[RMDB]
RNA sequence: GGGAACGACUCGAGUAGAGUCGAAAAUUAUUUCGCACAUAGAAAAUUAAAUUUAAUCUACAAGCUGUGGAAAAACCUGUUGAAAAAGGCUCAAAAAGUGGAUAACUUGCUGGGAUCAAGGUUAAAACACACAGACUUAAUUCGUUAAGUCUGUGUGAAAAGAAACAACAACAACAAC
Reactivity to DMS in 0.01 (KOAc 150mM, MgCl2 10mM, bicine 150mM(pH8.5), 24C), signal-to-noise 3, nucleotides 027 to 126: u000u010a060u000u000u000c020g000c030a080c060a160u010a150g000a070a090a110a070u000u020a030a130a160u060u020u020a090a100u020c000u000a190c070a060a150g010c190u010g030u000g000g010a020a020a050a100a070c010c000u000g010u030u020g010a050a080a120a120a080g020g010c010u000c030a000a040a150a020a020g000u000g000g040a110u030a040a020c020u000u000g000c300u000g000g000g000a120u000c050a030a030g000g010u000u010a050a090a100a100
Reactivity to 2A3 in 0.01 (KOAc 150mM, MgCl2 10mM, bicine 150mM(pH8.5), 24C), signal-to-noise 1, nucleotides 027 to 126: u080u030a100u040u030u020c010g030c000a050c010a100u030a040g010a000a250a010a040u060u110a150a000a030u110u140u010a080a060u010c010u030a050c060a110a000g000c220u020g020u060g050g000a000a000a000a040a040c030c000u050g010u180u010g020a000a010a010a040a030g060g010c030u030c120a090a090a000a000a000g020u020g070g030a020u040a230a000c000u000u020g010c040u060g000g030g050a060u130c020a070a060g020g000u050u100a020a070a070a000
Structure probing data (DMS and 2A3) for a 177-nucleotide construct. For DMS the reverse transcriptase was MarathonRT. The reactions ran in a buffer of 150 mM KOAc, 10 mM MgCl2 and 150 mM bicine (pH 8.5), at 24 C. 2A3 adducts were read by reverse transcription with SuperScript II with manganese.